[RMDB]
The data come from the RNA Mapping Database (RMDB), library RFM100. Chemical mapping of a 177-nucleotide RNA with 2A3 and DMS. For 2A3 the reverse transcriptase was SuperScript II with manganese. The 2A3 profile rests on 383 reads. The reactions ran in a buffer of 150 mM KOAc, 10 mM MgCl2 and 150 mM bicine (pH 8.5), at 24 C.
RNA sequence: GGGAACGACUCGAGUAGAGUCGAAAAGAAGUGGUCUGGAACGGCCUGUCGUAGAGGGUGAGAGUCCCGUAGACGAAAACAUGGUGACUGUCGUGACGGACACCCGAGUAGCAGCGGGCCCGUGAAACUCGGCCUGUUAGUUCGCUAACAGGCCGAGAAAAGAAACAACAACAACAAC
Reactivity to 2A3 in 0.01 (KOAc 150mM, MgCl2 10mM, bicine 150mM(pH8.5), 24C), signal-to-noise 1, nucleotides 027 to 126: g260a020a010g140u120g060g010u020c020u000g030g050a080a070c000g080g000c090c000u000g070u060c000g090u060a000g110a090g000g110g000u010g070a100g080a050g030u010c120c000c000g030u070a090g120a070c000g000a000a000a000a080c110a110u140g300g000u300g070a000c000u000g000u110c020g000u000g100a030c000g000g000a000c000a000c000c000c020g080a090g000u150a030g000c000a000g010c020g000g010g000c150c110c000g090u100g010a060a060a050
Reactivity to DMS in 0.01 (KOAc 150mM, MgCl2 10mM, bicine 150mM(pH8.5), 24C), signal-to-noise 1, nucleotides 027 to 126: g040a050a100g000u030g000g030u080c100u000g070g000a090a160c110g020g020c000c030u000g000u000c090g060u000a100g050a160g000g000g000u000g010a030g000a170g000u010c110c000c000g030u020a050g000a080c020g120a050a120a020a240c290a030u000g010g000u000g000a030c060u000g000u060c050g040u020g000a020c000g000g000a150c000a010c000c030c000g000a140g000u030a030g030c100a120g000c000g000g000g020c020c000c020g000u000g000a070a260a200